[RMDB]
RNA sequence: GGGAACGACUCGAGUAGAGUCGAAAAGGCCAACUCAAAGUGGGAAAGACAUUGGCGUGUGCUCCUCGAAUAGAGAGGAACUAACUGUACUUUCUGGAAAGGGAAACUAAAAUUGAGAGGCCAGUAAACUAAAAACUGCAUUGACACAGGGCAAAGCAUGCCUGUAGAAUUUCGAUUCUACAGGCAUAAAAGAAACAACAACAACAAC
Reactivity to DMS in 0.01 (KOAc 150mM, MgCl2 10mM, bicine 150mM(pH8.5), 24C), signal-to-noise 2, nucleotides 027 to 156: g010g010c000c010a060a150c080u000c060a040a080a110g030u010g020g040g020a030a080a070g000a070c030a090u000u000g040g000c030g020u010g040u000g010c010u000c000c020u010c000g030a170a260u010a210g020a130g020a030g000g010a050a170c020u010a050a030c030u000g020u000a120c050u000u000u020c020u000g050g010a070a050a100g000g030g000a160a060a150c100u000a030a040a040a170u000u000g010a140g020a300g000g000c030c030a030g020u000a000a080a090c050u000a010a090a140a060a050c030u000g000c030a170u000u000g050a100c040a060c050a070g020g000g000c040a060a060a120g020c080
Reactivity to 2A3 in 0.01 (KOAc 150mM, MgCl2 10mM, bicine 150mM(pH8.5), 24C), signal-to-noise 4, nucleotides 027 to 156: g010g010c010c000a080a100c010u010c020a050a040a020g060u100g060g050g020a010a010a020g010a010c020a060u070u090g050g020c050g060u110g040u050g090c030u010c000c000u000c010g050a150a090u220a170g140a030g000a010g040g000a010a000c000u030a050a010c040u010g020u070a090c010u020u020u000c020u050g100g030a080a060a040g090g020g060a050a100a020c010u040a080a060a150a230u030u020g010a020g010a020g020g000c010c010a010g030u060a020a150a040c080u130a030a040a090a040a000c040u050g020c030a090u040u070g030a010c010a010c050a160g070g020g000c050a090a030a010g020c000